Structure probing data (2A3 and DMS) for a 177-nucleotide construct. The reactions ran in a buffer of 150 mM KOAc, 10 mM MgCl2 and 150 mM bicine (pH 8.5), at 24 C.

[RMDB]
RNA sequence: GGGAACGACUCGAGUAGAGUCGAAAAGAGCAGUUUGCCGAUGGCUUCGCGAAUAGAAGGAUGCCAGUUAACGGCGCGAUUGACCGCGUCAUUGAGCGUCAGGUUGCCCGGCGCGGCGGCGCUGAGCUGCGUAUUGCGCUUUCGAGCGCAAUACGCAAAAAGAAACAACAACAACAAC
Reactivity to 2A3 in 0.01 (KOAc 150mM, MgCl2 10mM, bicine 150mM(pH8.5), 24C), signal-to-noise 2, nucleotides 027 to 126: g070a000g080c140a000g000u050u030u050g060c000c020g000a100u020g000g000c020u080u010c070g010c020g230a150a030u100a300g210a130a120g000g000a040u070g000c000c000a050g000u010u070a200a050c080g050g000c010g000c000g090a050u110u060g030a050c060c090g040c000g010u000c080a060u050u150g040a020g040c030g010u040c080a090g000g190u080u140g060c010c000c000g000g040c000g000c020g030g000c020g000g000c000g000c000u040g000a000g000c040
Reactivity to DMS in 0.01 (KOAc 150mM, MgCl2 10mM, bicine 150mM(pH8.5), 24C), signal-to-noise 1, nucleotides 027 to 126: g000a160g000c050a010g000u000u110u070g060c000c000g000a060u000g000g000c000u010u010c010g010c080g010a190a140u010a120g020a110a050g010g000a050u010g000c030c030a070g010u070u070a050a250c300g000g000c000g000c000g000a240u000u000g000a180c180c040g000c000g110u000c000a090u000u000g000a200g000c000g000u000c070a050g000g000u030u030g000c040c070c100g060g000c100g000c030g020g010c000g020g000c020g000c090u030g000a060g020c100

Overview
For 2A3 the reverse transcriptase was SuperScript II with manganese. The 2A3 profile rests on 649 reads. It was measured as part of the RMDB library RFM100.